This 177-nucleotide RNA was probed chemically with 2A3 and DMS.
RNA sequence: GGGAACGACUCGAGUAGAGUCGAAAAUGCACCGCGGCGACGUCGACCUGGUGGUAGUGCAGCGCAUGCAGGGUGGCCGCAGUGGGAGAGGGAACCCAGGCGGUGCUGGCCCCGGCGCGCGGCUGGGCAAUAUACCCUGAUUCGUCAGGGUAUAUUGAAAAGAAACAACAACAACAAC
Reactivity to 2A3 in 0.01 (KOAc 150mM, MgCl2 10mM, bicine 150mM(pH8.5), 24C), signal-to-noise 9, nucleotides 027 to 126: u110g020c010a010c020c020g000c020g040g010c030g020a110c050g080u110c040g050a130c010c010u050g060g020u070g050g070u100a080g060u050g090c060a060g020c080g010c070a030u160g060c020a020g040g010g030u050g080g010c020c010g000c010a020g110u070g010g020g020a130g030a050g020g040g010a010a010c000c000c010a010g040g040c010g000g000u030g040c020u030g070g020c000c000c000c000g020g000c010g000c020g000c000g030g020c010u020g000g010g000
Reactivity to DMS in 0.01 (KOAc 150mM, MgCl2 10mM, bicine 150mM(pH8.5), 24C), signal-to-noise 9, nucleotides 027 to 126: u010g010c040a050c030c030g020c050g010g010c030g010a090c080g020u000c060g010a170c040c020u000g010g020u000g010g020u000a070g020u010g010c040a070g010c100g020c070a050u000g010c030a100g000g010g020u000g010g010c020c020g010c030a050g010u010g000g000g010a140g010a130g000g000g010a150a160c010c010c040a050g000g010c010g010g010u000g010c030u000g010g010c040c010c010c050g010g010c010g010c040g020c030g010g000c010u000g000g000g010

For DMS the reverse transcriptase was MarathonRT. 2A3 adducts were read by reverse transcription with SuperScript II with manganese. Values cover nucleotides 27 to 126.